RNA sequence: GGGAACGACUCGAGUAGAGUCGAAAACUAGAAAAUGGGAAUUAUUUCAUCUAUGGGAAUAAGGAAGUGCUAGUGGAUGGGGAAAAGCAAAUCCUUAAGGUGAGUGGGGUGAUCCGCCCUUAUGAUAAUACCAUUGAUCUUUCGAGAUCAAUGGUAUAAAAGAAACAACAACAACAAC
Reactivity to 2A3 in 0.01 (KOAc 150mM, MgCl2 10mM, bicine 150mM(pH8.5), 24C), signal-to-noise 3, nucleotides 027 to 126: c030u050a060g120a060a220a040a060u080g000g000g050a020a030u110u060a050u060u190u060c010a050u000c050u090a070u130g030g000g030a060a070u050a050a030g010g020a050a010g050u040g040c050u040a010g040u030g100g070a060u060g020g000g000g020a010a100a000a050g040c030a030a030a060u020c010c000u010u060a050a010g040g000u040g050a090g010u090g000g010g000g020u050g010a070u010c020c030g030c020c010c000u040u090a110u090g040a010u030a130
Reactivity to DMS in 0.01 (KOAc 150mM, MgCl2 10mM, bicine 150mM(pH8.5), 24C), signal-to-noise 4, nucleotides 027 to 126: c080u000a080g000a060a060a100a060u010g000g010g010a160a110u000u000a050u000u010u010c080a050u000c110u010a080u020g010g010g010a060a080u010a020a030g000g000a070a080g010u000g030c080u010a060g010u010g000g010a100u000g010g010g000g000a050a050a080a100g010c080a050a070a050u000c050c030u000u000a050a040g000g010u000g010a060g010u000g010g000g000g010u000g000a110u000c050c050g010c020c010c020u000u010a030u000g010a100u010a060

About this RNA:
Chemical mapping of a 177-nucleotide RNA with 2A3 and DMS. Conditions: 150 mM KOAc, 10 mM MgCl2 and 150 mM bicine (pH 8.5), 24 C. It was measured as part of the RMDB library OK2TRN. For 2A3 the reverse transcriptase was SuperScript II with manganese. 2A3 is a SHAPE reagent: it acylates the 2'-hydroxyl of flexible nucleotides of all four kinds. Reactivities are given for positions 27 through 126.